[RMDB]
RNA sequence: GGGAACGACUCGAGUAGAGUCGAAAAGGCCAGGUCAAGCGUGAUCCGGCUCGGCUGACCGGGAUCCUGUCGGUGGGAGCCUGGCAGCGACAGUAGAACACCGACUAAGCCUGUAGCAUAUCCUCGGCUGAACGCUCUGGACGGGGGUUCGACUCCCCUCUCACAUCAGGUUCGCCUGAUGUGAGAGAAAAGAAACAACAACAACAAC
Reactivity to 2A3 in 0.01 (KOAc 150mM, MgCl2 10mM, bicine 150mM(pH8.5), 24C), signal-to-noise 2, nucleotides 027 to 156: g050g000c000c010a010g000g000u010c050a080a040g160c160g260u090g010a010u010c020c010g000g000c020u020c060g000g000c000u020g070a300c000c030g000g000g000a000u020c010c000u000g020u000c000g000g080u010g000g000g000a000g050c010c000u000g010g000c010a010g020c000g030a050c020a050g110u100a010g010a000a010c000a010c030c000g000a000c000u020a010a010g000c020c020u060g160u220a000g040c070a130u050a080u190c040c040u040c040g010g000c010u030g000a130a060c040g080c030u140c060u090g050g050a060c010g040g000g020g000g040u070u070c090g040a090c050u000c020c000c000